An RNA of 177 nucleotides, treated with 2A3 and DMS and read out base by base.
The 2A3 profile rests on 3,955 reads.
As a SHAPE reagent, 2A3 marks flexible, mostly unpaired nucleotides at the ribose 2'-OH.
It was measured as part of the RMDB library OK2TST.
Values cover nucleotides 27 to 126.
RNA sequence: GGGAACGACUCGAGUAGAGUCGAAAACAUGCGCGUCGGCUCGAUCCACGAGCCAGGCCCAUUGUCUCUCAUCUGCCGCGCAUGGGCGAAGCCAUCGUCGUGCGCUACGGACACCGGAUCGACGUGCCUCGUAGCAUGCAUUCGUGCAUGCUACGAGAAAAGAAACAACAACAACAAC
Reactivity to 2A3 in 0.01 (KOAc 150mM, MgCl2 10mM, bicine 150mM(pH8.5), 24C), signal-to-noise 2, nucleotides 027 to 126: c060a030u110g030c010g000c020g030u030c020g020g000c030u000c020g080a160u140c110c040a100c120g000a010g010c000c000a010g000g030c010c000c000a060u040u130g040u000c030u000c010u000c050a110u000c040u080g100c030c020g000c000g010c020a020u090g210g060g000c000g040a080a020g130c050c060a190u040c010g010u010c000g000u000g000c000g000c010u020a000c000g010g020a030c000a040c060c010g010g030a040u070c030g020a020c000g010u010g010c020
Reactivity to DMS in 0.01 (KOAc 150mM, MgCl2 10mM, bicine 150mM(pH8.5), 24C), signal-to-noise 3, nucleotides 027 to 126: c090a080u000g010c050g020c030g020u010c070g000g000c020u010c030g010a150u010c130c150a170c050g000a030g020c030c000a020g000g000c020c050c020a130u000u010g000u000c040u000c010u000c150a180u000c070u000g020c080c140g000c020g000c020a010u000g000g050g020c020g000a050a160g010c160c280a100u000c010g000u000c010g020u000g000c020g010c000u010a050c100g030g010a040c110a080c180c150g000g000a030u000c050g020a030c050g010u000g000c030